[RMDB]
RNA sequence: GGGAACGACUCGAGUAGAGUCGAAAAACACGUAGGGCGAGGGGUGGGCGAAAGUUGCCAUGAGACCGUAACUUUCGUAGUCAUUGAUAAAGGGGCAGGUCUUGCUCUUUUGUCAUUGCGGUUGCCUAAAACUGUGGUUCGUUCGCGAACCACAGAACACAUGUUGUCAGUUCGCUGACAACAUGUGAAAAGAAACAACAACAACAAC
Reactivity to 2A3 in 0.01 (KOAc 150mM, MgCl2 10mM, bicine 150mM(pH8.5), 24C), signal-to-noise 2, nucleotides 027 to 156: a000c120a000c030g130u070a060g040g030g020c180g010a090g020g020g010g040u280g000g030g000c020g020a010a010a000g020u020u010g000c020c000a110u240g110a040g040a210c050c030g010u010a000a000c000u000u010u010c020g000u030a040g030u070c030a020u020u040g020a020u030a030a030a000g000g000g000g000c050a030g060g160u130c050u030u040g000c000u000c000u010u020u000u000g000u030c020a040u000u000g000c030g060g000u060u030g040c000c030u060a070a070a040a080c000u000g020u020g010g000u000u000c000g010u010u040c110g030c000g110a000a000c000c000a000c000a000g010a000a000

Structure probing data (2A3) for a 207-nucleotide construct.
Source: RMDB library M2RFPK, as collected in RNAgym.
The RNA was probed in 150 mM KOAc, 10 mM MgCl2 and 150 mM bicine (pH 8.5) at 24 C.
Reactivities are rounded to 0.1 and cut off at 0 and 3.
The 2A3 profile rests on 1,139 reads.
For 2A3 the reverse transcriptase was SuperScript II with manganese.